[RMDB]
RNA sequence: GGGAACGACUCGAGUAGAGUCGAAAAAGAGGCACACCUCAUUGCCUUCAGUGCGGAAGUGGUUUUCUCAACUCCAAUCAAAAAGGCAGAAAAAGUAAAGCAACGCGAUUUUCGCGCUGUUUUUUCGACAGUUGUGGAAGUUCGCUUCCACAACUGUAAAAGAAACAACAACAACAAC
Reactivity to DMS in 0.01 (KOAc 150mM, MgCl2 10mM, bicine 150mM(pH8.5), 24C), signal-to-noise 1, nucleotides 027 to 126: a090g020a030g030g000c080a050c090a070c020c040u010c030a110u000u000g030c000c000u000u000c070a300g000u000g000c300g020g000a010a000g000u000g010g000u030u010u000u000c160u020c030a030a060c000u000c010c000a070a300u000c020a000a040a080a030a040g020g060c020a050g030a030a040a080a080a100g010u010a030a100a070g000c000a000a010c040g020c020g010a200u030u000u000u000c000g030c000g030c000u000g030u000u000u000u000u000u000c090g010